Overview
Structure probing data (DMS and 2A3) for a 207-nucleotide construct. The 2A3 profile rests on 3,587 reads. Values cover nucleotides 27 to 156. The reactions ran in a buffer of 150 mM KOAc, 10 mM MgCl2 and 150 mM bicine (pH 8.5), at 24 C. The data come from the RNA Mapping Database (RMDB), library M2RFPK.
RNA sequence: GGGAACGACUCGAGUAGAGUCGAAAACAAUCAACAAUAUGGUUUGUGUAGUUAUGCUGAAAAUCGUUGAGGUUGUAUGGAAUAGGUUAACCGUAAGACCUUAAGCUGAAAAACUUUAAAAUUAAUCAAAAUCAUGUACACUUCGGUGUACAUGAAAGAUAAUGUCUUUCUUCGGAAAGACAUUAUCAAAAGAAACAACAACAACAAC
Reactivity to DMS in 0.01 (KOAc 150mM, MgCl2 10mM, bicine 150mM(pH8.5), 24C), signal-to-noise 2, nucleotides 027 to 156: c060a100a130u020c020a060a070c050a130a190u000a150u010g010g030u000u000u000g030u000g050u000a080g040u000u010a070u000g020c000u010g030a060a100a080a070u000c020g050u000u000g000a090g000g000u000u000g000u020a070u000g000g020a120a150u010a060g000g040u000u020a150a210c050c110g020u000a060a120g010a040c000c030u000u000a030a050g080c020u000g010a060a100a090a060a060c010u000u000u000a040a040a030a100u000u000a030a160u010c010a060a020a130a100u000c000a000u000g010u000a010c000a000c010u010u010c260g090g000u000g010u000a000c000a000u000g000a010a000a080
Reactivity to 2A3 in 0.01 (KOAc 150mM, MgCl2 10mM, bicine 150mM(pH8.5), 24C), signal-to-noise 5, nucleotides 027 to 156: c030a010a060u150c030a020a040c030a050a120u120a050u180g050g030u050u100u050g050u040g010u030a120g040u100u030a050u140g010c040u090g040a040a050a050a070u120c060g010u010u020g000a020g020g000u040u010g020u040a130u100g040g020a090a070u030a100g040g030u100u100a040a040c040c020g020u040a070a030g010a020c000c000u000u030a020a000g000c030u040g040a120a030a010a020a020c020u110u170u210a060a070a050a100u170u190a050a060u120c030a040a110a010a100u020c000a000u000g000u000a000c000a000c000u000u060c160g090g000u000g000u000a000c000a000u000g000a000a000a000